This 207-nucleotide RNA was probed chemically with 2A3 and DMS.
[RMDB]
RNA sequence: GGGAACGACUCGAGUAGAGUCGAAAAAGCACUUGUACGAUACGUCGUACCAGUGCAGUCGUUGGGAUGGAACGCAAUUAAAUACAUGUGUGACGUGUAUUUGCGAACGACGUAAUUAUUUUUCAAAAUCACGCUAUCGUGUUCGCACGAUAGCGAACUAUAUGGUGAGCUUCGGCUCACCAUAUAGAAAAGAAACAACAACAACAAC
Reactivity to 2A3 in 0.01 (KOAc 150mM, MgCl2 10mM, bicine 150mM(pH8.5), 24C), signal-to-noise 6, nucleotides 027 to 156: a000g000c000a000c000u000u000g000u000a000c010g000a000u000a050c210g140u000c010g000u020a000c000c000a000g000u000g000c030a020g010u000c010g000u050u050g090g050g050a170u120g060g090a100a070c020g020c030a020a040u160u090a110a070a020u040a020c020a050u020g100u040g120u170g280a100c030g010u000g000u000a010u010u020u040g010c010g000a030a010c000g020a000c010g040u040a090a050u150u130a110u080u140u020u040u080c080a080a080a060a110u170c070a050c050g000c000u000a010u000c000g000u030g040u070u080c210g020c080a000c000g000a000u000a000g000c000g000a000a000
Reactivity to DMS in 0.01 (KOAc 150mM, MgCl2 10mM, bicine 150mM(pH8.5), 24C), signal-to-noise 3, nucleotides 027 to 156: a130g000c000a000c010u010u020g000u000a030c000g010a080u000a050c300g030u000c010g010u000a020c020c030a010g020u010g000c010a060g010u010c000g010u000u000g000g010g040a160u010g010g010a100a150c020g030c020a080a170u010u010a060a070a040u000a000c000a020u000g020u010g030u000g050a030c070g050u000g010u000a030u000u000u010g010c090g010a070a110c000g030a130c010g030u010a060a090u010u000a190u000u000u010u000u000c050a050a060a090a140u010c090a150c010g020c000u000a020u000c020g070u000g020u000u010c300g010c020a050c010g020a050u000a010g010c000g000a000a040
For DMS, 6,281 sequencing reads were counted.
It was measured as part of the RMDB library M2RFPK.